[RMDB]
RNA sequence: GGGAACGACUCGAGUAGAGUCGAAAAACCCUCGCAAGGGCUCGGUCAACCCGCCCCCGCAAGGUUUCGGGUUCGAUGAGCGGGGUGUGCUCACGCCGAGCCUACAGGGCCGGUGCAUCCGCCCGCGGAAGUACUAUAAUUUCGAUUAUAGUACUUCAAAAGAAACAACAACAACAAC
Reactivity to DMS in 0.01 (KOAc 150mM, MgCl2 10mM, bicine 150mM(pH8.5), 24C), signal-to-noise 9, nucleotides 027 to 126: a070c020c010c010u000c080g020c070a230a100g010g000g010c000u000c010g010g020u000c120a080a150c260c260c010g000c120c080c020c000c020g020c070a120a130g010g010u010u010u010c030g000g010g020u010u040c050g020a050u010g010a230g010c010g010g010g000g020u030g020u000g010c030u000c100a160c300g000c010c010g000a020g000c000c000u010a000c100a190g000g010g010c100c060g020g000u010g010c170a140u030c020c030g010c000c000c010g020c120g000
Reactivity to 2A3 in 0.01 (KOAc 150mM, MgCl2 10mM, bicine 150mM(pH8.5), 24C), signal-to-noise 9, nucleotides 027 to 126: a000c010c000c010u020c030g100c040a090a130g020g000g000c000u000c010g020g020u060c030a060a060c010c000c010g000c010c000c000c000c000g050c050a070a080g170g020u040u100u090c050g010g060g030u150u280c070g050a120u070g020a030g020c030g000g010g000g010u210g050u050g010c030u050c020a030c030g000c000c000g000a000g000c000c000u000a000c000a030g010g010g050c210c090g040g020u150g100c030a120u040c010c000g000c000c000c000g000c010g030
Source information:
Conditions: 150 mM KOAc, 10 mM MgCl2 and 150 mM bicine (pH 8.5), 24 C. An RNA of 177 nucleotides, treated with DMS and 2A3 and read out base by base. For DMS the reverse transcriptase was MarathonRT. High DMS reactivity at an A or C suggests that its Watson-Crick edge is free. Source: RMDB libraries RFM100 and RFMREP, as collected in RNAgym.